[RMDB]
RNA sequence: GGGAACGACUCGAGUAGAGUCGAAAAUGAAAACAAGGUUUUAGUUUCACCACAUCACGUUCACCUUUUGCUUUACAUGUAUCGCGAAAUGUAAACACUUAUUCAACCAAUUGAUGUCUUCCCGUUAAGCCGGUAAAGUGUUCGCACUUUACCGGCUAAAAGAAACAACAACAACAAC
Reactivity to DMS in 0.01 (KOAc 150mM, MgCl2 10mM, bicine 150mM(pH8.5), 24C), signal-to-noise 1, nucleotides 027 to 126: u010g030a100a000a060a050c050a150a090g000g020u030u000u000u000a200g040u020u000u000c080a140c020c030a060c020a040u070c030a070c190g000u030u000c010a060c030c020u000u000u040u000g000c210u000u000u000a000c050a060u000g000u070a020u000c020g060c050g000a030a040a020u000g000u010a100a110a000c090a050c120u020u010a070u020u000c080a020a090c040c090a000a170u050u000g000a100u000g010u030c030u000u000c000c000c000g000u000u120a030
Reactivity to 2A3 in 0.01 (KOAc 150mM, MgCl2 10mM, bicine 150mM(pH8.5), 24C), signal-to-noise 3, nucleotides 027 to 126: u090g020a000a000a000a020c060a060a080g060g040u020u000u020u080a020g010u030u040u040c010a020c040c000a020c020a010u080c050a010c080g000u000u050c010a050c030c000u020u010u040u140g050c020u040u000u020a010c000a060u070g050u090a130u100c010g040c030g120a130a090a030u110g000u110a090a000a000c040a030c050u100u080a030u110u050c000a010a060c020c000a010a190u060u050g010a020u040g020u050c040u030u000c000c000c010g010u010u070a030
Chemical mapping of a 177-nucleotide RNA with DMS and 2A3. The RNA was probed in 150 mM KOAc, 10 mM MgCl2 and 150 mM bicine (pH 8.5) at 24 C. The data come from the RNA Mapping Database (RMDB), libraries RFM100 and RFMREP. Reactivities are given for positions 27 through 126.